Description:
Chemical mapping of a 207-nucleotide RNA with 2A3. The reactions ran in a buffer of 150 mM KOAc, 10 mM MgCl2 and 150 mM bicine (pH 8.5), at 24 C.
RNA sequence: GGGAACGACUCGAGUAGAGUCGAAAAGAGGAGUUCGCUCCUCCUAUGAUCCUAAGUCGUUACGUUUGACGCGUUGUGGAGAUGUCCUCGGAAACGAGGAUACAUCGAUGAAACAACGCCGAGUAACGAUAUGGAAACAAACGGUAUUCGUACCGAAACUAACCAGGCCUUUCGAGGCCUGGUUAGUAAAAGAAACAACAACAACAAC
Reactivity to 2A3 in 0.01 (KOAc 150mM, MgCl2 10mM, bicine 150mM(pH8.5), 24C), signal-to-noise 2, nucleotides 027 to 156: g000a000g050g030a000g000u090u050c110g070c090u000c020c000u080c040c000u300a300u210g130a090u040c000c000u000a050a120g020u000c000g000u000u000a010c070g030u000u150u300g070a040c060g000c000g000u000u020g010u020g030g000a000g000a000u000g000u000c000c000u020c010g000g020a020a030a030c000g000a000g000g000a000u000a000c000a000u000c000g060a300u000g040a010a040a000c000a000a000c000g000c000c000g000a030g000u000a000a000c000g000a000u000a010u000g050g030a140a170a010c050a070a090a000c020g050g000u060a030u130u120c210g060u080a080c030c030g030a180a020